[RMDB]
RNA sequence: GGGAACGACUCGAGUAGAGUCGAAAAAAAUACGCCCCGCUAGUAACCAGAUCCACUUUUAAAGAAAAGCGUUUAGCGGCGUUGAGAUAGUGGUUUAAGUUUUUGAGCUUGCAAGGAUCGCCUAAAAACUAUGAAUCAAUUUCGAUUGAUUCAUAGUAAAAGAAACAACAACAACAAC
Reactivity to DMS in 0.01 (KOAc 150mM, MgCl2 10mM, bicine 150mM(pH8.5), 24C), signal-to-noise 4, nucleotides 027 to 126: a090a080a140u000a090c110g010c050c060c040c050g000c050u010a090g030u010a090a110c070c080a140g010a050u010c040c030a090c030u000u000u000u010a070a100a200g000a070a060a030a070g020c040g010u000u000u000a070g030c130g010g000c060g010u000u010g020a150g010a060u010a050g010u000g000g010u000u000u000a050a060g030u000u000u010u020u000g010a080g020c050u000u010g030c090a060a110g010g000a030u000c050g010c040c020u010a020a050a080a080
Reactivity to 2A3 in 0.01 (KOAc 150mM, MgCl2 10mM, bicine 150mM(pH8.5), 24C), signal-to-noise 1, nucleotides 027 to 126: a000a000a000u080a050c020g000c010c040c020c030g000c030u080a040g110u060a090a000c000c010a020g010a110u040c010c010a040c000u050u160u150u260a060a290a000g090a020a050a050a020g030c060g000u050u130u090a060g020c090g020g050c020g000u010u030g000a030g010a070u100a060g080u060g050g000u040u030u150a070a050g000u060u000u060u100u130g060a050g020c020u000u040g000c050a000a020g050g010a040u050c030g040c000c000u110a140a120a020a000